The record gives the reactivity of an RNA of 177 nucleotides to DMS and 2A3. DMS adducts were read by reverse transcription with MarathonRT. For 2A3 the reverse transcriptase was SuperScript II with manganese. For DMS, 5,668 sequencing reads were counted. The reactions ran in a buffer of 150 mM KOAc, 10 mM MgCl2 and 150 mM bicine (pH 8.5), at 24 C. It was measured as part of the RMDB library OK2TRN.
RNA sequence: GGGAACGACUCGAGUAGAGUCGAAAACUUCGGGAAACGCGGAGUCCGAAAGGGCCGCUCUACAGAGUUUAGCGCAGCGCUUUCAGAGAGGCAAUCUCACCGGAUGGAGAUCGGCAGUGACCGAGGCCACGUAUAUCUGGUUCGCCAGAUAUACGUGAAAAGAAACAACAACAACAAC
Reactivity to DMS in 0.01 (KOAc 150mM, MgCl2 10mM, bicine 150mM(pH8.5), 24C), signal-to-noise 5, nucleotides 027 to 126: c020u000u010c030g010g000g000a070a090a090c110g000c030g010g020a180g010u000c010c020g010a050a070a040g000g000g020c030c030g000c010u000c020u000a050c070a200g000a140g000u000u010u000a040g020c090g010c040a040g020c050g010c020u000u000u000c050a090g010a060g010a110g000g020c080a110a110u000c030u000c030a130c100c060g010g010a080u000g000g000a080g000a100u000c030g010g030c020a110g000u000g000a170c010c020g010a060g010g000c140
Reactivity to 2A3 in 0.01 (KOAc 150mM, MgCl2 10mM, bicine 150mM(pH8.5), 24C), signal-to-noise 4, nucleotides 027 to 126: c000u010u020c000g000g000g050a090a070a050c040g000c020g080g060a060g090u000c020c020g030a040a010a010g020g070g000c030c020g010c010u000c010u040a050c050a060g300a050g190u110u150u090a030g010c040g000c060a030g000c090g020c110u020u060u050c090a020g030a010g010a010g090g040c060a060a100u030c010u010c030a040c060c040g130g020a050u090g030g040a080g010a110u040c030g050g000c040a100g060u020g100a050c000c010g020a030g020g010c030